This 177-nucleotide RNA was probed chemically with DMS. Conditions: 150 mM KOAc, 10 mM MgCl2 and 150 mM bicine (pH 8.5), 24 C. The data come from the RNA Mapping Database (RMDB), library TTRINS. The DMS profile rests on 875 reads.

[RMDB]
RNA sequence: GGGAACGACUCGAGUAGAGUCGAAAAGAUAUGGAGCUGCGCGCAGUCUCUAGCGUGGCGCUACGUCAUUAGUCGGAAACGACUAAUCCUGUAGAACUACGCUCGGGCUGCGCGCAGCUCCUAAGUCGUCAGUAUGGUAGUUCGCUACCAUACUGACAAAAGAAACAACAACAACAAC
Reactivity to DMS in 0.01 (KOAc 150mM, MgCl2 10mM, bicine 150mM(pH8.5), 24C), signal-to-noise 1, nucleotides 027 to 126: g020a130u000a300u030g020g000a030g010c000u000g000c030g010c040g010c000a000g000u000c060u000c030u010a010g000c000g020u000g010g010c300g000c010u010a000c000g020u000c060a010u000u010a030g000u000c010g020g000a130a200a250c020g000a020c010u010a000a000u010c040c000u000g010u000a000g000a010a060c040u000a040c000g010c010u000c280g010g000g000c000u000g000c030g030c010g000c010a010g000c000u010c000c000u010a000a060g010u010c080